About this RNA
This 177-nucleotide RNA was probed chemically with 2A3 and DMS. The data come from the RNA Mapping Database (RMDB), libraries RFM100 and RFMREP. The reactions ran in a buffer of 150 mM KOAc, 10 mM MgCl2 and 150 mM bicine (pH 8.5), at 24 C. Values cover nucleotides 27 to 126. High DMS reactivity at an A or C suggests that its Watson-Crick edge is free. 2A3 adducts were read by reverse transcription with SuperScript II with manganese.
RNA sequence: GGGAACGACUCGAGUAGAGUCGAAAAGAAAGAAAGGCUAGUAAGCGCUAGGCUAAAGUGUGGCGUCCGAAGGGAUCAGCAGCCUAACAGAAGUUAGGAAACUCACUCUAGGGACUAGCCUCCUCAACCGUUGAAGUAGUUUCGACUACUUCAACGGAAAAGAAACAACAACAACAAC
Reactivity to 2A3 in 0.01 (KOAc 150mM, MgCl2 10mM, bicine 150mM(pH8.5), 24C), signal-to-noise 9, nucleotides 027 to 126: g110a000a090a000g100a100a080a010g010g000c010u000a000g000u060a150a060g050c050g020c110u010a000g070g050c190u290a100a070a110g040u050g010u020g080g010c010g010u010c000c010g060a110a120g100g000g000a050u100c060a020g040c020a010g020c000c000u000a000a000c020a030g300a300a020g050u000u000a000g000g000a130a130a070c020u010c000a020c000u060c000u000a000g020g000g000a000c000u000a000g000c010c000u020c000c000u070c020a080a090
Reactivity to DMS in 0.01 (KOAc 150mM, MgCl2 10mM, bicine 150mM(pH8.5), 24C), signal-to-noise 4, nucleotides 027 to 126: g000a150a100a110g000a100a160a020g000g010c020u010a000g000u000a030a100g020c020g030c010u000a020g000g010c070u000a120a130a040g000u000g000u010g000g010c020g010u000c000c000g000a150a070g030g000g000a030u010c070a100g020c150a300g010c000c000u000a000a010c010a120g050a150a120g000u000u000a010g010g020a030a050a300c040u020c030a020c030u010c000u010a060g000g010g030a030c020u000a020g010c000c000u000c040c010u000c130a110a080